[RMDB]
RNA sequence: GGGAACGACUCGAGUAGAGUCGAAAAGGUUACUUUCGAGUAACCAAAAAAGAUAUGGAUUCUGUCAACAGACAUGCACGGCGUUUCGGAAACGAAACCGAGUGCAACAGCUGUUGAGCAGAAUCCUAAGUCAAAAAACCCUGUUUCGACAGGGUAAGUAAGAAGGUUAGUUCGCUAACCUUCUUACAAAAGAAACAACAACAACAAC
Reactivity to DMS in 0.01 (KOAc 150mM, MgCl2 10mM, bicine 150mM(pH8.5), 24C), signal-to-noise 2, nucleotides 027 to 156: g000g000u000u010a000c020u000u000u010c290g040a020g040u000a000a030c000c030a000a010a050a140a050a080g020a100u000a300u000g000g010a000u000u010c000u030g020u020c030a010a020c000a020g000a100c040a300u000g000c010a020c030g060g000c180g060u000u000u000c000g020g000a200a150a230c010g000a010a050a060c020c000g030a220g000u000g030c000a000a070c090a120g000c000u010g020u010u000g000a130g070c010a000g010a010a020u000c010c010u000a020a110g010u010c040a010a090a140a080a120a110c000c000c000u000g000u000u020u000c170g000a060c020a010g050g030g000u010a000a130
Reactivity to 2A3 in 0.01 (KOAc 150mM, MgCl2 10mM, bicine 150mM(pH8.5), 24C), signal-to-noise 2, nucleotides 027 to 156: g010g000u020u000a000c010u020u100u260c230g060a030g020u000a000a010c000c000a110a000a000a010a020a050g050a030u040a030u040g000g000a010u000u000c000u000g010u020c000a000a000c000a000g150a120c090a090u050g020c000a000c020g120g030c210g070u000u010u020c020g030g010a080a100a050c000g010a000a010a000c000c010g030a040g040u000g010c000a010a020c020a020g020c000u010g000u000u000g020a050g030c010a000g000a000a000u000c000c000u000a010a000g030u010c040a000a000a010a180a050a080c000c010c030u030g010u010u160u050c140g010a020c000a000g010g000g000u020a010a010